[RMDB]
RNA sequence: GGGAACGACUCGAGUAGAGUCGAAAAGUUAGGCGAGGCUCCUAUACAAACACAGGUUGCUGAUCUGACGACGUCGAGAGACGCCCAAGAUUAGGACAGGAUAUAUCGAACCAAGGUAUAUCCUCAUAAAACUCGGAACACUUCGGUGUUCCGAGAAUCUUAUUUGCUACUUCGGUAGCAAAUAAGAAAAAGAAACAACAACAACAAC
Reactivity to DMS in 0.01 (KOAc 150mM, MgCl2 10mM, bicine 150mM(pH8.5), 24C), signal-to-noise 3, nucleotides 027 to 156: g010u000u010a020g020g000c010g020a140g000g010c040u010c000c010u000a070u000a140c100a070a060a110c040a060c100a170g020g000u000u000g010c000u010g010a050u010c010u020g010a140c010g010a020c000g020u000c010g020a300g010a300g020a030c000g000c000c020c070a240a090g000a050u000u000a110g000g020a140c050a050g040g020a030u000a010u000a010u000c000g000a130a300c150c130a120a150g000g010u010a000u010a000u010c000c000u000c030a030u000a040a040a050a210c030u000c030g000g010a040a010c000a030c010u000u010c270g060g000u000g020u000u010c000c000g010a000g000a020a030
Reactivity to 2A3 in 0.01 (KOAc 150mM, MgCl2 10mM, bicine 150mM(pH8.5), 24C), signal-to-noise 3, nucleotides 027 to 156: g000u040u030a010g010g040c090g080a100g060g020c070u030c030c020u120a110u080a230c130a050a190a000c110a000c040a110g070g080u240u170g050c010u000g000a070u000c010u010g000a000c040g000a000c010g000u010c000g010a010g000a010g000a090c000g010c010c000c030a030a020g030a080u130u190a040g000g080a050c060a050g000g000a000u000a000u000a000u010c030g020a100a100c130c030a110a050g000g000u010a010u000a000u000c000c000u000c000a010u160a020a120a020a010c000u000c010g000g010a010a010c000a010c010u040u050c220g070g010u000g000u000u030c000c010g000a000g000a010a000